[RMDB]
RNA sequence: GGGAACGACUCGAGUAGAGUCGAAAAGAUAUGGACUUACCAAUCUACCGAAUGGCGUUGAAAUCGGAAACGAUGGAGCCAUGUUAGACGUAAGUCCUAAGUCAAAACCCCUCCUUCGGGAGGGGAAGGUUGUCUUUACGUUCGCGUAAAGACAACCAAAAGAAACAACAACAACAAC
Reactivity to 2A3 in 0.01 (KOAc 150mM, MgCl2 10mM, bicine 150mM(pH8.5), 24C), signal-to-noise 2, nucleotides 027 to 126: g060a000u060a070u070g000g000a010c000u000u000a010c000c010a040a050u000c010u000a010c040c050g160a280a130u000g030g000c050g290u300u080g070a060a030a000u000c000g070g000a100a020a010c000g020a010u040g040g030a000g030c000c000a010u010g030u040u040a030g010a010c040g000u020a000a000g000u000c000c000u000a040a000g020u020c040a010a050a150a270c000c000c000c000u010c000c010u030u110c290g180g000g020a020g020g000g000g010a020a020
Reactivity to DMS in 0.01 (KOAc 150mM, MgCl2 10mM, bicine 150mM(pH8.5), 24C), signal-to-noise 2, nucleotides 027 to 126: g000a040u000a300u000g000g000a020c040u010u010a000c010c010a280a290u000c000u000a040c150c100g000a190a060u010g000g020c020g000u010u000g020a010a170a020u000c010g010g000a130a100a140c020g000a000u000g020g020a080g010c010c000a000u000g020u020u000a000g020a030c050g000u000a000a000g000u000c000c000u000a020a050g000u000c050a080a130a130a140c000c000c010c000u000c000c000u000u030c140g040g010g000a020g000g000g000g000a000a000

The record gives the reactivity of an RNA of 177 nucleotides to 2A3 and DMS. The reactions ran in a buffer of 150 mM KOAc, 10 mM MgCl2 and 150 mM bicine (pH 8.5), at 24 C.